[RMDB]
RNA sequence: GGGAACGACUCGAGUAGAGUCGAAAACAGCACCACUCCGACGUCGGGCGACAUUCGUGCAUGGUCGAGCACCCGGUACAGCUCGUCGACGGUGUGCGGGCGAAAUGCGUUGCGCACUUCAGGGCGGCCCAACUUGGUCAUUCGUGACCAAGUUGGGAAAAGAAACAACAACAACAAC
Reactivity to DMS in 0.01 (KOAc 150mM, MgCl2 10mM, bicine 150mM(pH8.5), 24C), signal-to-noise 1, nucleotides 027 to 126: c080a110g000c000a130c050c020a050c020u000c010c010g020a090c010g000u000c010g050g010g040c010g000a070c060a160u010u000c050g000u000g020c030a110u000g000g000u010c090g040a230g000c000a060c040c110c050g000g000u000a050c090a250g010c020u000c000g020u010c020g030a200c120g010g030u000g010u000g000c090g050g000g020c060g000a070a020a140u010g000c020g010u000u010g010c060g020c020a020c040u000u010c070a130g060g000g050c040g000g000
Reactivity to 2A3 in 0.01 (KOAc 150mM, MgCl2 10mM, bicine 150mM(pH8.5), 24C), signal-to-noise 1, nucleotides 027 to 126: c020a000g150c000a040c000c000a000c020u040c040c000g020a040c000g020u000c040g060g030g000c040g030a030c040a190u110u140c110g020u000g000c020a060u040g040g040u080c050g020a030g020c070a040c000c030c010g100g000u080a010c010a030g010c000u020c000g000u000c020g010a020c040g030g020u010g040u010g000c020g020g010g030c100g050a200a100a070u260g000c060g090u090u100g120c010g050c030a040c000u090u110c190a060g000g010g060c040g040g030

An RNA of 177 nucleotides, treated with DMS and 2A3 and read out base by base. Reactivities are given for positions 27 through 126. DMS adducts were read by reverse transcription with MarathonRT. Conditions: 150 mM KOAc, 10 mM MgCl2 and 150 mM bicine (pH 8.5), 24 C. For DMS, 804 sequencing reads were counted.